[RMDB]
RNA sequence: GGGAACGACUCGAGUAGAGUCGAAAAGCUAGCCUGCGCACGAUCUGACUGCCGUGAAGUCUAGCCUGCGUCAGAACUAGUCUCCAUCAAUCAAAGCGCAGGGAUUGAUGUACGAGACUGGUACACAGUGUAAGGAGUUGUUCGCAGCUCUUUACACAAAAGAAACAACAACAACAAC
Reactivity to 2A3 in 0.01 (KOAc 150mM, MgCl2 10mM, bicine 150mM(pH8.5), 24C), signal-to-noise 9, nucleotides 027 to 126: g040c020u030a010g010c000c010u010g000c010g000c000a040c040g050a070u040c030u080g080a050c020u040g030c020c010g030u030g060a070a010g050u010c020u030a010g010c000c010u040g030c020g090u080c060a030g030a070a010c000u010a010g000u000c000u000c000c000a000u000c000a000a000u000c010a030a070a050g030c020g000c010a010g010g000g000a000u000u000g000a000u000g020u050a060c070g000a000g000a000c000u000g000g010u060a050c090a010c010a050
Reactivity to DMS in 0.01 (KOAc 150mM, MgCl2 10mM, bicine 150mM(pH8.5), 24C), signal-to-noise 9, nucleotides 027 to 126: g000c030u010a050g000c020c010u000g010c030g020c020a140c100g010a070u020c050u000g000a060c050u010g010c050c020g000u010g000a100a100g010u010c020u010a050g010c040c020u000g000c080g010u020c080a100g000a090a030c010u010a010g000u000c000u000c000c020a010u000c000a000a010u000c000a060a070a100g020c030g010c010a030g000g000g000a010u000u000g000a010u000g010u070a100c220g000a020g010a010c000u010g000g000u000a080c120a090c190a110